Annotation:
Source: RMDB library OK1LIB, as collected in RNAgym. Chemical mapping of a 177-nucleotide RNA with 2A3. Values cover nucleotides 27 to 126. 2A3 adducts were read by reverse transcription with SuperScript II with manganese.

RNA sequence: GGGAACGACUCGAGUAGAGUCGAAAAUGGCUAUGUUGCCCAGGCUGGUCUUGAAUUCUUGGACUCAAGUGACCCUCCCACCUUGGCUUCUCAAAGUGCUGGGAUUAUAGGCAUGAGCCACCGCACCCGGCCGAUAGGGUUUCGACCCUAUCGGCCGAAAAGAAACAACAACAACAAC
Reactivity to 2A3 in 0.01 (KOAc 150mM, MgCl2 10mM, bicine 150mM(pH8.5), 24C), signal-to-noise 2, nucleotides 027 to 126: u040g050g000c020u090a080u220g170u080u060g090c010c000c040a030g030g030c000u100g000g020u000c000u050u020g080a160a130u250u100c070u160u300g090g010a050c010u000c070a030a030g050u120g150a080c000c000c000u000c030c110c000a000c000c000u020u030g000g000c030u130u000c140u080c090a070a090a010g100u070g130c080u080g030g000g140a120u170u090a070u290a060g060g000c020a040u070g030a000g000c030c000a000c000c030g020c000a030c020c020

The RNA was probed in 150 mM KOAc, 10 mM MgCl2 and 150 mM bicine (pH 8.5) at 24 C.